[RMDB]
RNA sequence: GGGAACGACUCGAGUAGAGUCGAAAAUCCUUUCUCGAUAGAGAUUGGAGUCAUACAACCCCAGAAACCAUUCCUUAUACCUUGAGUAUUGCUGAAUUCAGAUUAGCGUGCAUGCUCUUGGCUAUUCAUACCAAGGACAACUUCGGUUGUCCUUGAACAGGCUAUAUAGCUUCGGCUAUAUAGCCUGAAAAGAAACAACAACAACAAC
Reactivity to 2A3 in 0.01 (KOAc 150mM, MgCl2 10mM, bicine 150mM(pH8.5), 24C), signal-to-noise 4, nucleotides 027 to 156: u000c010c000u000u000u010c040u030c020g180a280u190a250g000a010g000a000u000u010g020g000a000g030u050c040a050u140a220c050a070a150c020c000c010c010a020g140a090a070a020c060c020a150u130u200c060c040u130u120a080u040a130c010c000u000u010g010a000g010u030a070u240u090g000c020u030g060a230a170u200u130c030a110g070a290u100u130a070g120c080g080u070g020c010a000u010g000c010u000c000u000u000g000g000c010u060a040u080u140c060a030u070a210c060c000a000a010g000g000a000c010a000a010c000u040u050c080g050g000u010u000g000u000c000c000u010u000g000a000a000
Reactivity to DMS in 0.01 (KOAc 150mM, MgCl2 10mM, bicine 150mM(pH8.5), 24C), signal-to-noise 2, nucleotides 027 to 156: u000c000c000u000u000u000c000u000c010g020a300u010a160g000a000g000a030u020u000g000g030a050g000u020c100a120u010a120c040a080a130c050c010c000c030a120g000a110a110a050c090c050a190u010u000c030c010u000u000a210u000a020c020c010u000u010g000a040g020u000a040u000u000g020c020u000g000a040a130u000u000c110a150g010a160u000u010a060g000c030g000u000g020c040a080u000g020c000u000c020u000u000g070g000c030u000a120u000u000c070a070u000a100c110c020a040a000g050g020a030c000a010a010c010u000u010c270g050g020u000u010g000u000c000c000u000u000g000a050a160
The record gives the reactivity of an RNA of 207 nucleotides to 2A3 and DMS.
The 2A3 profile rests on 2,322 reads.
The reactions ran in a buffer of 150 mM KOAc, 10 mM MgCl2 and 150 mM bicine (pH 8.5), at 24 C.